[RMDB]
RNA sequence: GGGAACGACUCGAGUAGAGUCGAAAAUGAUCGAGAGAUCUAACGAUGUACGCGAGUCAAACGCACAGACUCGAGCGAAAGCUCGGUCGAAAGACCGCGUACAUCGGUCGGCAAGUGUAAAGUCAAACACUCAUCCGGUAUUCGUACCGGAUGAGUGAAAAGAAACAACAACAACAAC
Reactivity to DMS in 0.01 (KOAc 150mM, MgCl2 10mM, bicine 150mM(pH8.5), 24C), signal-to-noise 3, nucleotides 027 to 126: u010g030a010u000c010g010a200g010a230g020a020u000c010u010a080a110c010g000a000u010g010u000a010c000g040c000g000a090g010u000c000a040a060a070c160g000c200a090c170a170g000a010c010u010c020g010a000g020c000g010a140a130a160g000c000u000c000g010g000u000c000g000a040a070a140g000a000c000c000g000c000g000u010a010c000a000u000c000g000g020u010c100g030g010c130a060a120g010u000g000u020a100a030a100g010u000c100a050a100a130
Reactivity to 2A3 in 0.01 (KOAc 150mM, MgCl2 10mM, bicine 150mM(pH8.5), 24C), signal-to-noise 2, nucleotides 027 to 126: u100g010a010u010c040g010a030g010a000g010a100u010c000u020a070a020c000g000a020u020g010u000a000c010g000c010g000a040g030u010c060a040a050a080c130g070c040a060c030a140g010a030c050u090c260g000a010g010c020g040a140a010a000g000c000u010c010g000g000u000c000g010a070a000a000g000a000c000c010g060c000g000u000a000c000a000u010c010g000g020u060c000g000g080c070a070a050g070u050g060u280a120a090a040g040u040c060a070a060a000